This 177-nucleotide RNA was probed chemically with 2A3 and DMS. Source: RMDB library M2PK50, as collected in RNAgym. For DMS, 17,124 sequencing reads were counted. For 2A3 the reverse transcriptase was SuperScript II with manganese. For 2A3, 14,467 sequencing reads were counted. The RNA was probed in 150 mM KOAc, 10 mM MgCl2 and 150 mM bicine (pH 8.5) at 24 C.

RNA sequence: GGGAACGACUCGAGUAGAGUCGAAAAAAGUGAUUAUUCGUAAUCACUUCACGCCCGGCGCGGUGGCGCGUGCCUGUAGUCCCAGCUACUCGGGAGGCUAAACGACGUACCCGUUCGCGGGUACGAAUAGUGUACAUCAAUUCGUUGAUGUACACUAAAAAGAAACAACAACAACAAC
Reactivity to 2A3 in 0.01 (KOAc 150mM, MgCl2 10mM, bicine 150mM(pH8.5), 24C), signal-to-noise 6, nucleotides 027 to 126: a000a000g010u010g010a020u010u040a020u050u090c180g040u070a010a010u010c000a000c000u040u040c090a090c080g000c000c000c000g000g000c010g000c000g020g020u010g010g000c010g000c010g000u010g000c000c010u200g110u200a080g040u000c000c000c000a010g000c050u260a220c030u080c130g000g000g010a000g000g010c030u070a120a080a030c090g120a010c010g010u000a000c000c020c000g010u020u030c220g000c010g030g000g000u000a000c010g000a000a010
Reactivity to DMS in 0.01 (KOAc 150mM, MgCl2 10mM, bicine 150mM(pH8.5), 24C), signal-to-noise 8, nucleotides 027 to 126: a020a000g010u000g010a010u000u000a020u000u010c190g010u000a010a000u000c000a010c000u000u000c080a120c200g010c010c000c170g010g000c010g020c010g000g010u000g010g000c020g010c020g010u000g000c010c000u000g020u010a080g000u000c010c000c000a040g010c010u010a130c030u000c080g000g010g010a070g000g010c020u010a040a060a090c180g000a200c010g010u000a010c000c000c000g020u010u010c180g010c010g010g000g010u000a000c000g010a060a060